[RMDB]
Source information: Source: RMDB library TTRDEL, as collected in RNAgym. Chemical mapping of a 177-nucleotide RNA with 2A3 and DMS. For 2A3 the reverse transcriptase was SuperScript II with manganese. The reactions ran in a buffer of 150 mM KOAc, 10 mM MgCl2 and 150 mM bicine (pH 8.5), at 24 C. For DMS the reverse transcriptase was MarathonRT.

RNA sequence: GGGAACGACUCGAGUAGAGUCGAAAAGAUAUGGACAGGAACUACGGUAGUAGAGGCAUCGAUCUCGGAAACGAGGGAGCCUUGUAUACCGCCUGUCCUAAGUCAAACGCCGCGUUCGCGCGGCGAACAAAAUCAGACGGUUCGCCGUCUGAUUUUGAAAAGAAACAACAACAACAAC
Reactivity to 2A3 in 0.01 (KOAc 150mM, MgCl2 10mM, bicine 150mM(pH8.5), 24C), signal-to-noise 1, nucleotides 027 to 126: g010a000u030a040u170g000g000a010c010a010g030g040a090a120c250u300a090c280g040g000u010a030g030u120a000g030a000g010g040c040a080u260c140g120a200u070c030u010c000g030g130a100a010a010c000g010a010g010g010g010a020g000c030c020u030u060g300u290a070u010a000c000c000g000c000c000u000g010u000c000c000u010a040a000g000u010c030a000a050a250c010g000c000c000g010c060g010u110u090c240g000c030g100c000g120g060c000g000a000a000
Reactivity to DMS in 0.01 (KOAc 150mM, MgCl2 10mM, bicine 150mM(pH8.5), 24C), signal-to-noise 1, nucleotides 027 to 126: g010a050u000a300u020g020g000a010c000a020g000g000a120a060c090u030a300c010g040g020u000a010g000u000a220g000a010g020g030c000a200u000c190g020a040u000c000u000c000g010g020a020a020a150c010g000a020g010g020g000a020g030c000c000u000u030g010u010a300u010a030c050c000g020c000c000u000g000u000c000c000u010a000a050g020u000c070a070a110a170c030g040c000c010g030c010g020u000u020c240g000c000g030c000g010g020c000g010a020a070